[RMDB]
RNA sequence: GGGAACGACUCGAGUAGAGUCGAAAAGAUUCGAACCCACGCUACCGCCGUGAGAGGGCGGCGUCCUAGGCCGCUAGACGACGGGGCCAGAACCGAUCCGAGCUGUCUAGCAUAGCUCACACCGCUACUCAUAUCGUCCAUUCGUGGACGAUAUGAGAAAAGAAACAACAACAACAAC
Reactivity to 2A3 in 0.01 (KOAc 150mM, MgCl2 10mM, bicine 150mM(pH8.5), 24C), signal-to-noise 2, nucleotides 027 to 126: g060a110u110u120c040g020a020a070c000c010c010a030c010g000c020u130a210c010c000g010c000c000g030u030g080a190g020a110g100g160g000c030g000g000c000g010u040c000c060u140a090g160g000c020c000g040c040u020a040g040a090c020g000a000c010g030g000g000g030c000c020a050g020a040a010c010c030g010a020u030c010c040g010a020g010c020u010g010u030c030u030a040g030c050a050u040a010g000c000u050c030a020c020a010c010c060g070c080u080a060
Reactivity to DMS in 0.01 (KOAc 150mM, MgCl2 10mM, bicine 150mM(pH8.5), 24C), signal-to-noise 3, nucleotides 027 to 126: g020a130u000u010c070g010a090a210c020c010c010a100c150g010c040u020a070c010c030g010c010c000g060u010g000a160g030a170g000g000g020c030g000g000c060g000u000c080c080u000a180g020g010c010c040g000c020u010a080g000a060c000g010a030c050g000g000g010g010c020c090a110g000a100a070c130c070g000a070u000c070c080g010a070g010c040u000g010u030c010u020a100g010c120a040u000a050g010c010u000c000a090c130a120c070c040g020c120u000a180

Chemical mapping of a 177-nucleotide RNA with 2A3 and DMS.
DMS adducts were read by reverse transcription with MarathonRT.
The reactions ran in a buffer of 150 mM KOAc, 10 mM MgCl2 and 150 mM bicine (pH 8.5), at 24 C.
Values cover nucleotides 27 to 126.